[RMDB]
RNA sequence: GGGAACGACUCGAGUAGAGUCGAAAACCUGAUUUCGAUCAGGAAAUCUCCUAAGUCGACGAACCGACGAAGAUGUUUGUCAGUGUAUCGGAAACGAUACACUUGGAUUUAACAUCAGAGGUUCGCCGAUAUGGAUUAAGUUCUCGUUCGCGAGAAAAAUUCAACAGCUUUUCGAAGCUGUUGAAUUAAAAGAAACAACAACAACAAC
Reactivity to 2A3 in 0.01 (KOAc 150mM, MgCl2 10mM, bicine 150mM(pH8.5), 24C), signal-to-noise 4, nucleotides 027 to 156: c010c000u020g000a000u030u110u160c240g090a080u100c040a020g000g090a050a040a050u080c070u000c010c000u090a160a070g010u000c000g000a000c000g000a010a000c010c010g160a180c050g040a300a020g000a010u010g010u010u010u010g020u000c010a000g000u000g000u020a010u000c000g020g040a060a060a030c020g000a000u000a000c000a000c000u000u070g050g010a010u130u240u260a000a000c010a010u000c000a020g020a010g050g000u000u000c000g000c010c000g020a010u020a050u050g010g010a000u090u250a190a080g090u060u040c010u000c010g050u090u120c300g010c070g070a020g000a050a080a010
Reactivity to DMS in 0.01 (KOAc 150mM, MgCl2 10mM, bicine 150mM(pH8.5), 24C), signal-to-noise 2, nucleotides 027 to 156: c000c010u020g010a020u000u000u000c200g010a070u000c010a050g010g010a020a090a100u000c060u000c010c020u010a120a300g010u000c010g040a010c000g010a010a010c000c000g010a300c200g010a110a130g010a030u000g000u000u010u000g020u000c020a040g000u000g020u020a010u000c010g020g010a240a120a300c000g040a010u010a000c020a030c000u000u010g020g010a030u000u010u000a020a010c000a050u000c000a140g020a300g000g010u000u000c020g000c020c010g000a020u000a140u000g000g000a110u000u000a040a170g000u000u000c010u000c010g020u010u010c240g010c030g000a070g000a010a040a080
The data come from the RNA Mapping Database (RMDB), library RNAMAK.
Structure probing data (2A3 and DMS) for a 207-nucleotide construct.
For DMS the reverse transcriptase was MarathonRT.
2A3 adducts were read by reverse transcription with SuperScript II with manganese.
The 2A3 profile rests on 3,481 reads.
Conditions: 150 mM KOAc, 10 mM MgCl2 and 150 mM bicine (pH 8.5), 24 C.